[RMDB]
RNA sequence: GGGAACGACUCGAGUAGAGUCGAAAAACCUCUAAGUUCGCUUAGAGGUAAUGAACGCUGCAAAAAGCAGCGCGGUCAGCGGAGCACGCAAAAGCAACGCAAGAACACCAUUCUUCGGAAUGGUGAAAUCCAUUCGUUGUUUCGACAACGAAUGGAUAAAAGAAACAACAACAACAAC
Reactivity to DMS in 0.01 (KOAc 150mM, MgCl2 10mM, bicine 150mM(pH8.5), 24C), signal-to-noise 2, nucleotides 027 to 126: a050c010c000u010c010u010a010a010g020u000u000c300g020c000u000u000a000g000a000g010g000u000a000a020u010g000a100a090c030g000c020u000g010c000a070a030a080a140a170g010c000a000g000c010g000c050g020g000u000c100a140g000c000g010g020a300g010c070a100c200g000c150a030a010a130a020g020c030a080a120c020g000c080a060a080g000a120a200c020a020c000c000a000u000u000c000u000u000c250g000g000a000a010u010g010g000u000g000a010a040
Reactivity to 2A3 in 0.01 (KOAc 150mM, MgCl2 10mM, bicine 150mM(pH8.5), 24C), signal-to-noise 1, nucleotides 027 to 126: a000c010c000u000c000u000a050a000g010u010u110c130g010c130u000u020a000g000a040g000g010u020a020a010u090g010a070a010c030g000c010u030g000c020a200a170a010a000a230g020c010a000g000c000g020c000g010g050u110c010a030g030c010g010g020a040g010c020a040c130g050c030a050a110a010a040g010c020a000a030c000g000c050a010a010g080a090a010c000a010c010c000a000u000u000c000u040u090c300g100g000a000a000u010g020g000u010g000a010a010